[RMDB]
RNA sequence: GGGAACGACUCGAGUAGAGUCGAAAACCUUCGAGGGGGUUCACACCUCCAGUCGGCGGGCCGGCUACUCUUCUUUCCCUUCUCUCGUCUUCCUCGGUCAACCUCUUAAGUUCCUCUUCUUCUUCCUAAAUGUGUCAAAGUUCGCUUUGACACAUUUAAAAGAAACAACAACAACAAC
Reactivity to 2A3 in 0.01 (KOAc 150mM, MgCl2 10mM, bicine 150mM(pH8.5), 24C), signal-to-noise 1, nucleotides 027 to 126: c000c000u030u050c100g040a140g000g020g020g010g000u140u120c050a060c030a040c070c000u010c010c000a050g100u040c020g010g050c020g000g010g040c010c010g030g030c040u040a060c010u000c040u130u000c010u030u080u050c020c000c000u040u010c040u020c020u000c000g050u030c040u060u020c000c020u000c010g050g000u000c020a040a090c000c000u070c040u070u070a060a040g010u010u020c000c010u000c070u030u020c010u060u010c000u000u040c010c010u020
Reactivity to DMS in 0.01 (KOAc 150mM, MgCl2 10mM, bicine 150mM(pH8.5), 24C), signal-to-noise 2, nucleotides 027 to 126: c010c010u010u000c090g020a180g000g000g000g010g000u010u010c260a130c180a100c030c000u000c020c010a110g020u010c070g030g020c070g000g010g010c070c030g000g010c050u010a050c020u010c020u000u010c030u000u010u000c030c000c000u010u000c020u000c010u010c060g020u000c040u000u000c020c000u010c060g000g000u000c030a070a120c060c020u000c030u000u010a080a110g000u000u000c000c020u000c140u000u000c070u000u000c040u000u000c070c030u000